RNA sequence: GGGAACGACUCGAGUAGAGUCGAAAAUUUAUUGUCCUUGGAUUCAGACCAAUGUAGAAUUAAAUGCUGCCUGGGCCAGUUUGUUAAAUGUGUGAAGUAGCACCAACUUCCUAACUCUUUUUACUCUUAAUUUUCUGAUUUCUUAGGUGGGCAUGUGUCGAGACAGAUAAUUCGUUAUCUGUCUCGAAAAAGAAACAACAACAACAAC
Reactivity to 2A3 in 0.01 (KOAc 150mM, MgCl2 10mM, bicine 150mM(pH8.5), 24C), signal-to-noise 2, nucleotides 027 to 156: u070u110u030a100u070u060g050u040c010c000u020u050g080g010a100u130u060c060a040g020a130c050c020a060a070u130g010u050a090g040a180a040u160u050a130a070a120u050g000c000u010g020c000c030u030g000g000g030c030c000a000g040u100u110u080g010u060u260a020a150a120u080g080u030g040u020g020a080a030g000u050a010g050c020a000c040c000a080a040c010u150u150c010c010u030a080a070c000u080c000u110u090u070u050u110a020c010u010c010u190u020a150a090u210u170u120u000c020u030g100a160u050u050u110c040u080u050a030g010g030u050g000g020g000c010a050u120g060u010g000
Reactivity to DMS in 0.01 (KOAc 150mM, MgCl2 10mM, bicine 150mM(pH8.5), 24C), signal-to-noise 1, nucleotides 027 to 156: u010u000u000a050u010u010g000u000c040c050u000u000g020g010a140u000u000c040a090g030a110c030c050a100a090u010g000u000a110g010a140a130u000u000a040a120a090u000g020c020u000g000c020c070u010g000g030g010c050c050a010g010u000u000u000g020u000u000a030a060a090u010g020u000g020u000g010a040a060g010u000a100g000c030a070c070c010a010a110c030u010u000c000c020u000a060a050c050u000c000u000u020u010u000u000a060c020u000c040u010u000a050a130u000u000u000u000c040u000g000a110u000u000u010c010u010u000a070g030g010u000g030g010g050c030a030u000g010u000g010
Record summary: This 207-nucleotide RNA was probed chemically with 2A3 and DMS.